Chemical mapping of a 177-nucleotide RNA with 2A3 and DMS. It was measured as part of the RMDB library OK2TST. Values cover nucleotides 27 to 126. 2A3 adducts were read by reverse transcription with SuperScript II with manganese. The reactions ran in a buffer of 150 mM KOAc, 10 mM MgCl2 and 150 mM bicine (pH 8.5), at 24 C.
RNA sequence: GGGAACGACUCGAGUAGAGUCGAAAACGCGCGUGGCGCACGUCGGCGCAGGCGGGCGGCGUUCGCGUUCGCACGCCCGUUCGAGGCAUAAUCGAGUGUUGCGCGUAUCGCAACGGCGUGCGCAUUAGUCCAUGGGACUAUUCGUAGUCCCAUGGACAAAAGAAACAACAACAACAAC
Reactivity to 2A3 in 0.01 (KOAc 150mM, MgCl2 10mM, bicine 150mM(pH8.5), 24C), signal-to-noise 2, nucleotides 027 to 126: c070g060c010g020c060g090u180g090g030c000g010c010a010c000g020u030c030g050g030c000g000c020a020g040g000c020g000g010g000c000g030g000c000g000u050u040c110g010c020g070u070u020c010g010c010a150c010g030c000c010c010g020u080u080c000g030a040g020g050c090a070u160a060a100u090c050g010a010g070u110g010u030u030g010c010g030c020g010u030a060u180c070g000c040a010a010c010g020g000c030g000u070g050c000g020c000a010u030u040a010
Reactivity to DMS in 0.01 (KOAc 150mM, MgCl2 10mM, bicine 150mM(pH8.5), 24C), signal-to-noise 3, nucleotides 027 to 126: c080g000c060g020c170g010u000g040g030c030g000c010a020c050g020u010c010g000g000c020g030c050a130g000g020c030g000g010g010c010g000g020c000g010u010u010c090g000c050g010u000u010c010g020c010a080c010g030c010c000c010g030u000u010c050g010a140g010g020c190a100u000a140a100u000c070g000a080g020u000g000u010u000g010c000g030c110g020u010a080u020c090g020c110a040a270c010g000g000c010g010u020g010c010g010c050a050u010u000a060